[RMDB]
RNA sequence: GGGAACGACUCGAGUAGAGUCGAAAAAGGUCGGGUUGUACAGUUCGUACAGCGACGGCGCACGGAAACCUUCGCUGUAGGCGCCGCGCAGGACCAACUGGCGGAACGGCUGGAAGCGGAACGAAUAGAUGACGGGAGGAUUCGUCCUCCCGUCAUCAAAAGAAACAACAACAACAAC
Reactivity to DMS in 0.01 (KOAc 150mM, MgCl2 10mM, bicine 150mM(pH8.5), 24C), signal-to-noise 1, nucleotides 027 to 126: a090g000g000u000c020g020g000g000u010u000g000u000a110c000a090g020u000u000c270g000u000a090c030a090g020c020g000a160c000g010g000c020g020c050a110c100g000g000a070a100a130c130c100u000u010c080g000c060u010g010u000a190g010g010c000g010c000c000g000c010g000c020a120g000g000a060c080c190a110a080c010u010g000g020c040g000g000a040a050c100g000g000c030u000g000g010a120a080g010c070g020g030a080a100c130g000a150a030u010a080